[RMDB]
RNA sequence: GGGAACGACUCGAGUAGAGUCGAAAAGGUACAGUGGGGUCCAUAUAAAGUUUUGUCUAGAUGAAGCUUAGCUACUACAAAGAUUUGGACCCUUAAGCUCUUCAAUCUGGCAAGAGAAUGGACAACCGUAGUUUCUGCUAUUCGUAGCAGAAACUACAAAAGAAACAACAACAACAAC
Reactivity to DMS in 0.01 (KOAc 150mM, MgCl2 10mM, bicine 150mM(pH8.5), 24C), signal-to-noise 1, nucleotides 027 to 126: g030g030u000a060c130a060g000u010g010g010g040g000u010c000c020a020u020a080u000a190a160a110g020u020u030u000u000g010u000c040u030a010g010a050u000g010a070a060g010c300u000u000a030g050c020u000a100c100u000a250c160a040a060a030g000a150u000u000u000g000g020a080c070c060c000u000u000a030a070g000c020u000c030u020u000c030a050a060u000c050u000g010g010c060a000a040g000a080g040a100a100u000g000g000a070c080a010a070c130c160